Structure probing data (2A3 and DMS) for a 207-nucleotide construct.
Reactivities are given for positions 27 through 156.
The DMS profile rests on 1,900 reads.
The data come from the RNA Mapping Database (RMDB), library VIROID.
High DMS reactivity at an A or C suggests that its Watson-Crick edge is free.
2A3 adducts were read by reverse transcription with SuperScript II with manganese.
[RMDB]
RNA sequence: GGGAACGACUCGAGUAGAGUCGAAAACUUCUGCAGGUUAAGCUCGGCGCUCAAGAGUUGUAUCCACCGGGUAGUUUCCAACUCCGGCUGGUGUGAAGAGGGAGCCGUUCCACGCAGGACGCGAACAAGAAGAAUACGAAGCAACUUCAGGUCGCCGGAUCAUUACUCUCUUCGGAGAGUAAUGAUCAAAAGAAACAACAACAACAAC
Reactivity to 2A3 in 0.01 (KOAc 150mM, MgCl2 10mM, bicine 150mM(pH8.5), 24C), signal-to-noise 2, nucleotides 027 to 156: c030u110u060c040u150g030c020a110g060g070u100u120a150a050g000c050u010c020g010g000c030g010c010u010c050a150a030g010a020g050u030u050g010u080a130u040c010c000a030c040c040g040g010g000u110a050g040u050u080u160c090c030a030a020c050u020c030c010g080g000c100u010g000g040u010g050u080g060a110a150g050a090g070g010g020a010g000c000c000g010u030u020c030c010a080c040g000c040a020g080g040a030c050g010c020g040a070a050c040a120a050g070a030a040g050a050a060u180a140c090g070a090a030g080c030a030a020c010u080u050c030a040g040g080u070c020g030c040c010g020
Reactivity to DMS in 0.01 (KOAc 150mM, MgCl2 10mM, bicine 150mM(pH8.5), 24C), signal-to-noise 1, nucleotides 027 to 156: c010u000u000c060u000g000c000a160g030g010u000u010a100a140g010c060u010c010g020g000c090g010c020u010c040a110a220g010a040g010u000u050g000u010a100u010c010c010a130c070c010g080g020g010u020a050g010u030u000u040c090c030a080a160c010u000c020c020g000g040c000u000g010g050u000g000u000g000a090a080g020a140g040g030g010a100g060c040c030g000u020u000c030c020a200c020g050c070a120g000g010a110c040g010c000g000a120a150c100a060a210g020a140a120g020a170a180u000a250c050g000a160a220g000c070a050a080c020u000u000c050a120g010g000u000c020g000c010c080g010